[RMDB]
RNA sequence: GGGAACGACUCGAGUAGAGUCGAAAACUCGUGAAAGUCCCAAACUCAUUGGAACCAAAACAGGAAACUCUAAAGCGGCAGGUGGGAUACCCAGUGGCGCCGUGAGAAGGAUAAACAGUUUGAUAGCAAGGGCAGUGAACUAUCAGACGGCCCCAAAGAUACAGAAGAUAUUCGUAUCUUCUGUAUCAAAAGAAACAACAACAACAAC
Reactivity to DMS in 0.01 (KOAc 150mM, MgCl2 10mM, bicine 150mM(pH8.5), 24C), signal-to-noise 2, nucleotides 027 to 156: c030u000c040g000u020g000a120a160a130g000u000c010c000c020a080a120a180c070u000c080a110u000u000g010g000a040a130c020c010a020a040a110a150c040a140g010g010a130a130a140c020u010c010u000a070a090a150g020c060g020g030c020a020g020g000u000g000g000g000a170u000a090c060c010c000a140g050u000g000g010c030g000c040c000g030u000g010a090g010a080a050g010g000a090u000a020a040a080c050a080g010u000u000u000g010a060u000a060g000c020a090a150g010g030g000c030a030g050u010g000a130a040c040u000a010u000c030a040g000a040c020g010g010c000c010c020c020a050a110a300
Reactivity to 2A3 in 0.01 (KOAc 150mM, MgCl2 10mM, bicine 150mM(pH8.5), 24C), signal-to-noise 3, nucleotides 027 to 156: c020u030c000g030u040g090a210a060a040g040u010c000c000c030a020a060a060c070u090c030a080u040u110g020g030a020a030c000c030a060a070a030a100c050a040g030g080a080a090a090c030u040c030u120a130a190a080g020c030g040g000c010a010g070g050u020g040g040g010a020u070a090c030c010c010a050g080u020g040g040c040g000c030c040g010u010g000a030g010a030a000g050g010a010u080a050a140a000c030a020g000u020u020u030g020a010u010a000g030c070a080a030g050g040g030c020a000g020u020g060a050a000c000u000a010u010c000a000g000a020c000g030g000c000c010c000c030a030a120a010
This 207-nucleotide RNA was probed chemically with DMS and 2A3. 2A3 adducts were read by reverse transcription with SuperScript II with manganese. The reactions ran in a buffer of 150 mM KOAc, 10 mM MgCl2 and 150 mM bicine (pH 8.5), at 24 C. Reactivities are given for positions 27 through 156. The DMS profile rests on 2,818 reads. For DMS the reverse transcriptase was MarathonRT.